[RMDB]
RNA sequence: GGGAACGACUCGAGUAGAGUCGAAAAGUGAGUUGGCCGACGUGCUAGCCAGCGCGCAUGCGGCCAUGCGGGAAAGCGUCCGUCGGCUGGAUGCUAUCGCGGCCGAACUCGACCGCGCGGUUCCGGAAUAACCUAGGUUGUUCGCAACCUAGGUUAUAAAAGAAACAACAACAACAAC
Reactivity to 2A3 in 0.01 (KOAc 150mM, MgCl2 10mM, bicine 150mM(pH8.5), 24C), signal-to-noise 5, nucleotides 027 to 126: g160u130g030a050g020u030u030g020g000c010c010g070a210c040g060u070g010c020u020a050g120c050c070a030g010c060g000c000g000c040a010u120g030c020g030g040c040c010a010u080g000c030g040g030g050a090a190a130g050c030g040u030c000c000g020u040c040g030g020c010u040g020g020a020u080g030c030u040a050u230c020g010c000g010g010c020c010g030a090a070c040u010c090g050a070c010c030g030c010g000c050g080g010u040u020c020c020g000g030a110
Reactivity to DMS in 0.01 (KOAc 150mM, MgCl2 10mM, bicine 150mM(pH8.5), 24C), signal-to-noise 5, nucleotides 027 to 126: g010u020g010a090g000u000u010g000g010c000c000g010a140c040g050u010g010c030u000a060g010c080c080a070g000c060g060c180g050c070a070u000g010c040g020g010c030c030a020u030g010c020g020g000g000a110a090a080g000c090g020u020c050c020g010u010c140g000g010c030u000g000g000a020u010g020c010u000a050u030c020g030c010g010g000c000c000g010a120a070c130u010c020g000a060c060c030g000c050g010c180g010g010u010u010c010c010g000g010a300
An RNA of 177 nucleotides, treated with 2A3 and DMS and read out base by base. For 2A3, 3,657 sequencing reads were counted. 2A3 adducts were read by reverse transcription with SuperScript II with manganese. The RNA was probed in 150 mM KOAc, 10 mM MgCl2 and 150 mM bicine (pH 8.5) at 24 C. Values cover nucleotides 27 to 126. It was measured as part of the RMDB library OK1LIB.